Chemical mapping of a 177-nucleotide RNA with DMS and 2A3. For DMS the reverse transcriptase was MarathonRT. For 2A3, 1,743 sequencing reads were counted. 2A3 adducts were read by reverse transcription with SuperScript II with manganese. The reactions ran in a buffer of 150 mM KOAc, 10 mM MgCl2 and 150 mM bicine (pH 8.5), at 24 C.

RNA sequence: GGGAACGACUCGAGUAGAGUCGAAAAGAGGAUUCAACGAGCUUCGUAGCAACGAUAGCAACGUAGCUUUUGCUACGACCCCAGCUAUCGAGGGCAGCUACGUCCCGUGCUCGAGGGAAGAAUCCGAGACGUAUACCUGCUUCGGCAGGUAUACGUCAAAAGAAACAACAACAACAAC
Reactivity to DMS in 0.01 (KOAc 150mM, MgCl2 10mM, bicine 150mM(pH8.5), 24C), signal-to-noise 2, nucleotides 027 to 126: g000a160g000g000a050u000u000c000a150a200c030g010a020g060c010u000u000c000g000u000a010g010c000a160a150c050g010a000u000a010g040c020a120a150c030g000u000a020g000c000u000u000u050u020g000c000u000a000c010g000a210c070c070c060c070a100g000c000u000a000u020c000g000a090g020g020g010c210a080g000c010u000a000c000g010u000c100c070c120g000u000g010c000u000c010g000a230g020g030g000a100a160g000a050a000u000c000c000g000a120
Reactivity to 2A3 in 0.01 (KOAc 150mM, MgCl2 10mM, bicine 150mM(pH8.5), 24C), signal-to-noise 2, nucleotides 027 to 126: g140a030g020g000a020u000u000c020a060a060c010g030a020g000c010u090u100c010g030u000a000g020c000a070a100c020g040a010u000a020g020c060a060a080c000g000u000a000g010c000u100u160u210u300g000c020u000a010c000g170a180c010c030c000c000a010g000c000u010a000u030c010g010a160g060g090g090c080a060g000c010u010a000c000g030u060c020c020c040g050u060g000c000u000c010g000a050g040g130g040a110a150g020a010a030u040c000c000g020a020
For DMS, 1,219 sequencing reads were counted. Values are in units of 0.01, from 0 to 300, in steps of 10. In probing experiments dimethyl sulfate is read out at A N1 and C N3, which are open when not base-paired.